[RMDB]
This 207-nucleotide RNA was probed chemically with DMS and 2A3. The reactions ran in a buffer of 150 mM KOAc, 10 mM MgCl2 and 150 mM bicine (pH 8.5), at 24 C. The DMS profile rests on 5,318 reads. Source: RMDB library M2RFOK, as collected in RNAgym.
RNA sequence: GGGAACGACUCGAGUAGAGUCGAAAACUCUUGCACAGAAUCACCUUUCUAUAAUAACCAGUGCAAGAAGGGUUAUUAUACCAUUUAAUGUGCCGAGGCCCCGCGGAGUACGAUCGAGGGUACAGCAAAAACGUGAAGUACUUCGGUACUUCACGAACAAUACAUCGUACUUCGGUACGAUGUAUUGAAAAGAAACAACAACAACAAC
Reactivity to DMS in 0.01 (KOAc 150mM, MgCl2 10mM, bicine 150mM(pH8.5), 24C), signal-to-noise 3, nucleotides 027 to 156: c040u000c010u000u000g010c000a040c020a180g030a260a160u010c090a130c080c040u000u010u000c060u000a060u000a020a030u010a030a030c010c000a300g010u000g000c040a070a050g000a130a100g020g000g010u010u000a010u010u000a040u000a090c200c110a140u000u000u000a130a090u000g030u010g020c010c020g010a300g000g000c000c000c010c010g000c050g020g000a200g000u010a060c070g000a160u000c050g020a130g000g000g000u000a050c020a030g010c040a040a050a050a100a140c020g020u000g030a010a020g050u000a010c010u000u000c290g050g060u000a000c000u010u000c000a020c020g010a030a080
Reactivity to 2A3 in 0.01 (KOAc 150mM, MgCl2 10mM, bicine 150mM(pH8.5), 24C), signal-to-noise 5, nucleotides 027 to 156: c000u000c000u000u000g000c000a010c000a000g070a120a110u140c030a130c050c030u130u300u100c120u120a020u000a020a010u010a020a000c000c000a010g000u010g000c000a000a000g010a000a010g010g000g000u010u010a010u020u010a030u020a050c030c010a100u140u170u300a250a100u250g050u080g050c000c000g020a070g060g000c000c000c000c000g030c020g010g030a110g150u300a050c030g070a250u050c010g010a090g010g000g000u010a000c000a000g000c000a010a000a000a000a020c000g000u000g000a000a000g010u000a000c000u030u070c180g020g000u000a000c000u000u000c010a000c000g000a000a000